About this RNA
An RNA of 207 nucleotides, treated with DMS and 2A3 and read out base by base. 2A3 adducts were read by reverse transcription with SuperScript II with manganese. The DMS profile rests on 3,015 reads.
RNA sequence: GGGAACGACUCGAGUAGAGUCGAAAACUGGCUGGAGUGGAUGAUAGAGGUGGAUGGGGAAUGACAUACAGCUCGUCAGCUACUGUAGGUGUGAAAUAGGCUUCCGGGUGAUGUCCUGGGACUUACACCAGGAUCUUUCUUCUGCUUCUCCAUUCGCGCUCACUUAAAGAUUCGUCUUUAAGUGAGCAAAAGAAACAACAACAACAAC
Reactivity to DMS in 0.01 (KOAc 150mM, MgCl2 10mM, bicine 150mM(pH8.5), 24C), signal-to-noise 1, nucleotides 027 to 156: c030u000g020g000c050u000g050g000a090g030u000g030g020a110u040g020a110u000a090g000a080g030g020u010g010g000a050u000g000g010g000g000a100a060u010g010a070c050a100u000a050c060a080g000c060u000c070g030u000c020a060g040c000u000a010c020u010g030u010a020g020g020u010g030u010g020a050a050a150u000a100g020g000c000u000u000c030c050g020g010g010u000g010a100u000g030u000c020c020u000g010g030g010a150c100u000u010a090c120a050c000c010a050g000g000a040u000c110u000u010u000c030u000u010c030u000g010c030u010u010c010u010c050c010a160u000u000c060g000c130
Reactivity to 2A3 in 0.01 (KOAc 150mM, MgCl2 10mM, bicine 150mM(pH8.5), 24C), signal-to-noise 4, nucleotides 027 to 156: c030u040g050g010c010u010g010g040a040g010u060g010g050a080u060g000a040u050a090g080a040g070g050u080g010g040a070u090g000g000g010g070a020a070u100g040a020c030a050u230a030c040a050g030c020u020c030g030u030c040a010g010c020u030a010c030u120g040u080a030g010g000u030g010u010g060a040a070a100u140a060g050g030c040u070u040c070c020g020g000g030u060g040a080u070g010u000c000c010u030g010g000g060a050c050u100u140a030c050a050c040c000a010g020g020a020u030c050u020u090u020c010u100u000c020u010g010c000u040u010c010u000c030c010a040u080u120c030g000c040
DMS adducts were read by reverse transcription with MarathonRT. The reactions ran in a buffer of 150 mM KOAc, 10 mM MgCl2 and 150 mM bicine (pH 8.5), at 24 C.